RNA sequence: GGGAACGACUCGAGUAGAGUCGAAAAGAUAUGGAAUAUCUACCCACCGUAGUGUGAUCGAAGAACACGGAUGUCAUCGGAAACGAUGACAUCCGUGGGAGAUCACCUACGAGGAUAUUCCUAAGUCCAACAACUAUUACUUCGGUAAUAGUUGUUGAAAAGAAACAACAACAACAAC
Reactivity to 2A3 in 0.01 (KOAc 150mM, MgCl2 10mM, bicine 150mM(pH8.5), 24C), signal-to-noise 3, nucleotides 027 to 126: g100a090u300a260u300g010g010a020a000u010a020u000c010u160a300c010c010c000a020c020c010g000u000a020g030u050g010u010g300a010u000c010g120a300a040g050a120a010c000a000c000g040g010a010u000g000u000c000a010u020c020g010g070a110a070a110c000g000a010u000g000a000c000a000u050c000c000g020u000g000g000g000a020g000a000u010c010a010c000c010u000a000c010g000a000g000g000a000u000a000u020u040c000c000u010a080a030g160u070c080
Reactivity to DMS in 0.01 (KOAc 150mM, MgCl2 10mM, bicine 150mM(pH8.5), 24C), signal-to-noise 4, nucleotides 027 to 126: g000a110u030a130u010g020g020a030a010u020a000u010c000u000a130c010c020c020a300c180c000g000u010a000g000u030g030u000g000a020u000c000g000a140a120g000a110a260c000a010c010g000g000a030u000g000u000c000a000u010c000g010g000a110a140a200c000g020a030u000g000a010c000a000u000c010c000g010u010g000g000g000a120g000a000u010c000a000c010c000u000a000c000g000a050g020g010a000u000a000u010u000c000c000u010a070a160g010u010c090